[RMDB]
RNA sequence: GGGAACGACUCGAGUAGAGUCGAAAAGUCCCGCCAGGGGUGAUCCACCCGGAGAUGAGCGGAGAAACCACAUCCAGAGGACCCCUUCGACGAACAGAAGACCCUGGACCGGGAGGGAAUAGCCCAUACACAACUCACUUCGGUGAGUUGAAAAGAAACAACAACAACAAC
Reactivity to DMS in 0.01 (KOAc 150mM, MgCl2 10mM, bicine 150mM(pH8.5), 24C), signal-to-noise 8, nucleotides 027 to 129: g040u010c020c010c030g040c110c160a120g040g020g020g030u010g030a150u040c010c030a110c010c050c040g030g020a100g000a080u060g000a090g030c080g050g040a170g040a120a100a080c060c060a070c000a190u040c050c040a060g050a150g060g030a090c100c140c100c000u030u030c040g050a010c150g050a020a070c140a140g020a070a020g030a080c000c000c000u000g000g000a010c060c070g000g000g000a170g040g010g020a030a010u030a280g000c070c010c020a100u100a010c160a100
Reactivity to 2A3 in 0.01 (KOAc 150mM, MgCl2 10mM, bicine 150mM(pH8.5), 24C), signal-to-noise 9, nucleotides 027 to 129: g020u000c000c000c000g020c020c030a090g000g010g010g010u050g030a010u030c010c000a010c010c000c020g020g000a130g000a090u190g030a050g080c100g060g070a120g120a160a060a030c030c010a030c000a060u030c010c020a020g100a170g080g020a140c040c020c040c020u010u020c030g110a160c070g060a250a060c030a110g010a030a010g030a050c020c010c010u010g000g020a010c010c010g020g020g000a150g030g040g020a010a040u120a100g010c010c010c000a020u080a010c060a000